[RMDB]
Description
Chemical mapping of a 207-nucleotide RNA with DMS and 2A3.
RNA sequence: GGGAACGACUCGAGUAGAGUCGAAAAUUCGGUUCAACUUUUUAUCUUAUGCUUACAUUUAAGCAUGUCUAAAUUUAAACCACUCAGAGAGGUGGUUCGUAAUGUCUGCUUCUUUGGGCCUUCAGAUAUCUGAAAGCGUAGCCUUCAAACCAGACUACAGUACGUACUGGUUCGCCAGUACGUACUGAAAAGAAACAACAACAACAAC
Reactivity to DMS in 0.01 (KOAc 150mM, MgCl2 10mM, bicine 150mM(pH8.5), 24C), signal-to-noise 1, nucleotides 027 to 156: u020u000c040g030g060u010u000c060a040a080c170u000u000u000u030u000a010u020c040u010u000a020u010g000c000u000u010a060c210a270u000u010u000a020a000g020c010a030u010g000u010c020u030a060a040a090u010u000u000a030a060a030c000c020a060c030u000c010a130g030a110g010a180g010g030u000g010g030u000u000c020g000u000a110a090u010g040u010c000u000g000c050u000u000c010u000u010u010g000g020g040c000c040u020u020c020a040g010a250u020a080u000c000u080g010a040a050a080g020c030g010u010a030g010c000c020u040u000c030a090a120a230c160c100a120g000a030c030u010a090
Reactivity to 2A3 in 0.01 (KOAc 150mM, MgCl2 10mM, bicine 150mM(pH8.5), 24C), signal-to-noise 2, nucleotides 027 to 156: u020u050c000g060g010u030u080c050a120a160c070u200u140u050u080u170a110u110c090u040u140a010u050g000c010u040u020a060c020a280u240u140u060a000a020g000c020a010u030g020u000c080u080a090a100a180u100u110u080a100a070a000c010c010a010c000u020c070a060g070a050g000a040g270g000u010g010g000u050u020c020g060u070a120a130u130g010u030c020u020g010c010u070u000c000u070u090u010g000g000g000c000c000u010u010c030a010g020a170u160a080u160c050u000g050a020a030a010g040c050g050u040a050g010c000c000u040u080c020a000a010a140c170c000a000g010a030c000u020a030